[RMDB]
Description:
The record gives the reactivity of an RNA of 177 nucleotides to 2A3 and DMS. For DMS the reverse transcriptase was MarathonRT. The reactions ran in a buffer of 150 mM KOAc, 10 mM MgCl2 and 150 mM bicine (pH 8.5), at 24 C. 2A3 adducts were read by reverse transcription with SuperScript II with manganese.
RNA sequence: GGGAACGACUCGAGUAGAGUCGAAAAGUCUCCACUGUGAAGCACAAAUAGCGGGAUGUCGUCUGUUGGGCCGAGAAUGCGGGCCAAGCAGCGGGUUGAAGCGAUUUACGCAAAUCCGGCUACCGCAGGUAUAGCGUAUCUUCGGAUACGCUAUACCAAAAGAAACAACAACAACAAC
Reactivity to 2A3 in 0.01 (KOAc 150mM, MgCl2 10mM, bicine 150mM(pH8.5), 24C), signal-to-noise 9, nucleotides 027 to 126: g040u010c020u020c050c030a070c050u070g050u050g120a100a060g070c060a030c020a100a140a080u130a070g010c020g000g020g020a040u110g050u060c040g010u010c020u010g030u030u030g040g030g010c020c020g050a060g100a180a130u300g300c050g010g010g020c000c000a010a000g000c000a010g030c010g000g020g000u030u030g080a140a040g010c000g030a040u100u140u300a080c030g010c010a010a030a010u010c010c000g000g010c000u010a020c010c000g000c030a040
Reactivity to DMS in 0.01 (KOAc 150mM, MgCl2 10mM, bicine 150mM(pH8.5), 24C), signal-to-noise 5, nucleotides 027 to 126: g000u010c030u020c010c030a140c140u010g000u010g020a090a090g000c070a070c150a080a090a100u000a080g000c030g000g000g010a120u010g010u000c040g010u010c050u000g010u000u000g000g000g030c030c010g000a140g000a100a100u010g020c050g000g000g000c020c020a030a020g010c050a020g030c100g000g000g000u000u000g010a130a160g000c020g020a260u020u020u020a080c030g030c030a060a050a040u000c010c000g010g010c010u010a130c030c040g020c040a090